[RMDB]
RNA sequence: GGGAACGACUCGAGUAGAGUCGAAAAUCGCCACCGUCGUAGGUGCUCGCAAAGGCUCGUUCAGUGACAAGUGAAUCUGAAUCGGUCACGAGUCAUGCAUACGGCUGGAUUGACAAAUCCGUGCCGGAAGAGUUAUGGAUUUCGAUCCAUAACUCUUAAAAGAAACAACAACAACAAC
Reactivity to DMS in 0.01 (KOAc 150mM, MgCl2 10mM, bicine 150mM(pH8.5), 24C), signal-to-noise 9, nucleotides 027 to 126: u000c080g020c110c010a090c060c050g010u000c170g020u000a090g020g020u000g010c040u000c070g020c150a070a110a140g020g000c030u000c140g020u000u000c060a100g020u000g010a240c070a090a210g010u010g000a070a090u010c030u010g010a080a070u010c200g020g000u000c030a070c010g010a210g000u000c050a040u000g010c100a100u010a120c010g010g000c010u000g000g000a020u000u000g010a170c300a060a040a030u000c000c010g010u000g020c000c000g000g000
Reactivity to 2A3 in 0.01 (KOAc 150mM, MgCl2 10mM, bicine 150mM(pH8.5), 24C), signal-to-noise 8, nucleotides 027 to 126: u060c030g080c040c000a020c020c020g090u090c040g040u070a060g000g050u040g020c030u030c030g020c050a140a080a050g020g000c020u030c070g020u070u050c040a030g010u010g060a040c030a110a160g070u080g200a110a060u030c030u040g030a080a070u110c060g020g000u030c010a000c020g000a010g000u030c010a020u100g030c020a080u100a150c000g000g000c010u020g000g010a000u000u070g070a080c050a030a060a000u000c020c030g070u080g000c000c010g050g010
Source information:
This 177-nucleotide RNA was probed chemically with DMS and 2A3. For 2A3 the reverse transcriptase was SuperScript II with manganese. The reactions ran in a buffer of 150 mM KOAc, 10 mM MgCl2 and 150 mM bicine (pH 8.5), at 24 C.